[RMDB]
RNA sequence: GGGAACGACUCGAGUAGAGUCGAAAAGAUAUGGAUGUGGUAGGAACUACACACUGACUCGGAAACGAGUCAGAAUGUGCCUACCAAGCAUCCUAAGUCAAAAGACCAUAAGUUCGCUUAUGGUCAAGUUAACAGUCGUGUUCGCACGACUGUUAACAAAAGAAACAACAACAACAAC
Reactivity to 2A3 in 0.01 (KOAc 150mM, MgCl2 10mM, bicine 150mM(pH8.5), 24C), signal-to-noise 2, nucleotides 027 to 126: g000a000u020a010u090g000g010a000u020g070u090g050g000u000a000g040g000a230a290c250u300a100c230a000c000a000c000u000g000a000c000u010c000g000g020a030a010a010c000g000a000g000u000c010a000g000a010a080u180g000u000g100c000c000u010a000c000c000a000a000g080c000a000u000c020c000u000a020a000g020u010c020a010a070a100a240g020a010c010c000a000u000a010a000g070u060u240c300g020c220u000u000a010u000g000g020u000c020a010a000
Reactivity to DMS in 0.01 (KOAc 150mM, MgCl2 10mM, bicine 150mM(pH8.5), 24C), signal-to-noise 2, nucleotides 027 to 126: g020a010u000a070u000g000g000a030u010g020u000g000g000u000a010g010g020a210a090c240u020a300c040a000c020a070c000u000g000a030c000u010c000g030g020a020a010a030c000g010a060g000u000c000a010g000a070a020u010g030u000g030c020c010u000a010c000c000a070a080g020c040a010u010c000c000u000a010a130g000u020c010a170a130a170a110g000a020c000c000a030u010a010a010g010u000u010c300g020c000u000u000a000u000g000g000u000c000a010a090